This 207-nucleotide RNA was probed chemically with DMS and 2A3.
The reactions ran in a buffer of 150 mM KOAc, 10 mM MgCl2 and 150 mM bicine (pH 8.5), at 24 C.
Values cover nucleotides 27 to 156.
For DMS, 5,802 sequencing reads were counted.

[RMDB]
RNA sequence: GGGAACGACUCGAGUAGAGUCGAAAAAAUGCCGCCUCAGUUCCAAGCUCUUUCGUGGCACUGUAAACAGUCCUAUUGAGUUAGGGGCAGUCAACGACGUUGCGAAGCUAAAUUAUCUGGUCGAGAGUUACGAUUCCCUACUUCGGUAGGGAAUCAAUGAAGAAGAGGUAUUCGUACCUCUUCUUCAAAAAGAAACAACAACAACAAC
Reactivity to DMS in 0.01 (KOAc 150mM, MgCl2 10mM, bicine 150mM(pH8.5), 24C), signal-to-noise 2, nucleotides 027 to 156: a070a050u000g000c000c010g050c020c000u000c060a110g010u030u010c020c050a130a180g000c010u000c020u000u000u000c050g040u010g010g020c090a030c030u000g000u000a080a070a140c050a060g010u010c010c000u000a080u000u010g010a130g030u010u000a110g010g020g000g010c000a050g030u000c030a060a100c010g010a040c060g000u010u000g000c000g000a130a150g020c070u020a050a060a060u010u000a060u000c070u000g010g040u000c050g020a120g010a110g010u010u010a100c090g000a050u000u000c000c000c000u000a010c010u010u010c300g080g020u000a010g020g020g000a000a000u010c000a020a180
Reactivity to 2A3 in 0.01 (KOAc 150mM, MgCl2 10mM, bicine 150mM(pH8.5), 24C), signal-to-noise 3, nucleotides 027 to 156: a000a000u060g020c030c020g040c000c010u030c050a070g000u060u040c030c020a070a020g020c000u060c010u060u040u050c100g100u130g010g010c080a010c030u080g060u130a120a130a090c030a030g030u000c000c010u040a100u040u070g030a070g050u050u050a030g000g010g020g000c010a020g040u060c030a000a030c040g090a010c060g010u050u080g010c090g070a020a000g030c030u070a060a080a110u250u080a080u070c030u050g070g000u030c020g050a010g000a020g200u090u080a070c060g010a000u010u000c000c000c010u000a000c000u020u020c120g040g000u000a000g000g000g010a000a000u000c000a000a000